[RMDB]
RNA sequence: GGGAACGACUCGAGUAGAGUCGAAAAGGUAAAAAGCCGAGUUUGGUUGAAAAGGGCCUUGGCCCUCCAAGCGACAUUUUCAAUCUUUGACGGCAAGUUUCAACCGAACAAGCCGAAGUCUUUGCUUAAAUGCGGAGAUUCAGAGACUAAACGAAGACACAUCUUUAAAGUUCGCUUUAAAGAUGUGAAAAGAAACAACAACAACAAC
Reactivity to DMS in 0.01 (KOAc 150mM, MgCl2 10mM, bicine 150mM(pH8.5), 24C), signal-to-noise 1, nucleotides 027 to 156: g010g000u000a030a120a130a090a140g010c010c000g020a070g000u010u000u000g020g020u000u000g000a020a040a010a000g020g030g020c000c050u000u030g060g000c130c060c190u000c020c000a030a060g030c030g000a070c040a070u000u000u000u000c050a070a050u000c010u000u000u000g020a200c010g010g050c010a020a230g010u000u010u000c000a150a160c060c050g000a030a060c060a100a300g030c010c010g000a060a090g010u000c000u000u010u000g010c000u000u000a120a090a120u010g000c040g020g000a010g000a050u000u000c010a050g010a170g000a090c010u000a040a070a050c110g010a060a100g000a270
Reactivity to 2A3 in 0.01 (KOAc 150mM, MgCl2 10mM, bicine 150mM(pH8.5), 24C), signal-to-noise 4, nucleotides 027 to 156: g040g000u110a110a090a030a040a010g020c010c030g070a070g030u000u040u040g040g000u040u060g040a030a020a030a040g040g020g020c010c020u080u120g140g000c000c040c030u030c000c000a020a000g020c020g060a050c020a040u050u100u040u060c030a030a000u000c000u050u060u060g060a030c010g010g000c010a020a020g000u020u030u060c090a100a090c050c060g000a020a010c020a040a040g030c000c010g030a030a010g060u000c000u040u010u020g000c010u080u130a080a120a110u210g000c010g010g010a010g000a000u040u020c020a030g030a000g010a050c020u120a060a100a070c060g040a050a010g060a000